[RMDB]
RNA sequence: GGGAACGACUCGAGUAGAGUCGAAAAGGCUUCACCUUCGGGUGAAGCCAAAUAAGCGAGAUCGCCGGAUAGCUGCCUAAGCGAGAUCGCCGGAUACCUGCCAAAGGAUUCCGUUCGCGGAAUCCAACUCUUAAUCGUUCUUCGGAACGAUUAAGAGAAAAGAAACAACAACAACAAC
Reactivity to DMS in 0.01 (KOAc 150mM, MgCl2 10mM, bicine 150mM(pH8.5), 24C), signal-to-noise 1, nucleotides 027 to 126: g000g000c000u000u000c000a010c020c000u000u030c300g020g050g020u010g010a020a000g000c000c000a000a000a020u000a170a130g000c020g000a000g000a160u000c000g060c000c050g000g000a110u020a120g030c160u020g030c000c010u030a150a120g000c000g000a050g000a120u000c010g010c000c050g000g010a210u000a070c020c000u000g020c140c110a020a100a160g030g000a000u000u000c000c000g000u000u000c140g000c030g020g000a060a000u000c000c000a030a070
Reactivity to 2A3 in 0.01 (KOAc 150mM, MgCl2 10mM, bicine 150mM(pH8.5), 24C), signal-to-noise 1, nucleotides 027 to 126: g010g000c010u000u000c000a000c020c010u100u160c250g030g010g000u000g000a000a000g020c000c000a000a000a000u000a000a000g000c000g020a000g000a020u020c000g020c030c010g000g080a120u140a210g120c150u220g040c110c000u010a060a010g000c010g010a000g000a030u010c000g000c000c000g000g010a030u060a120c000c030u030g100c070c050a090a200a110g050g000a000u000u000c040c000g020u030u040c300g000c030g010g000a000a000u000c000c000a000a000